[RMDB]
RNA sequence: GGGAACGACUCGAGUAGAGUCGAAAAGAUAUGGAGACGAACUUCGCAUCGAUCUAUAUGGAGGUAAAAGUAUGUCGGAAACGACAUACUUUUGCGAAGUAUAGGGAGCGAAUUCGUCUCCUAAGUCCUAUCGGUAUCUCUUCGGAGAUACCGAUAGAAAAGAAACAACAACAACAAC
Reactivity to DMS in 0.01 (KOAc 150mM, MgCl2 10mM, bicine 150mM(pH8.5), 24C), signal-to-noise 2, nucleotides 027 to 126: g020a090u000a300u000g000g000a020g010a000c000g000a000a030c230u000u000c000g010c030a300u000c240g030a040u010c000u000a010u000a000u000g000g000a300g020g000u000a000a000a000a020g030u030a010u000g000u000c000g000g000a090a070a300c010g010a010c000a000u000a000c000u000u000u000u000g010c000g000a300a230g020u000a000u000a000g020g000g000a040g020c000g000a050a090u000u000c000g000u000c000u010c000c000u000a000a040g010u000c040
Reactivity to 2A3 in 0.01 (KOAc 150mM, MgCl2 10mM, bicine 150mM(pH8.5), 24C), signal-to-noise 2, nucleotides 027 to 126: g060a020u150a050u240g010g000a020g010a000c020g000a020a020c240u040u000c020g000c070a300u300c080g100a090u000c040u020a030u000a000u010g140g000a270g300g140u100a040a020a000a020g000u000a000u020g000u030c000g000g050a080a090a050c000g010a010c000a000u010a000c000u000u010u010u000g010c000g010a050a010g000u000a000u010a010g010g020g010a000g000c000g000a010a010u010u010c000g000u000c010u000c000c010u010a000a000g000u000c000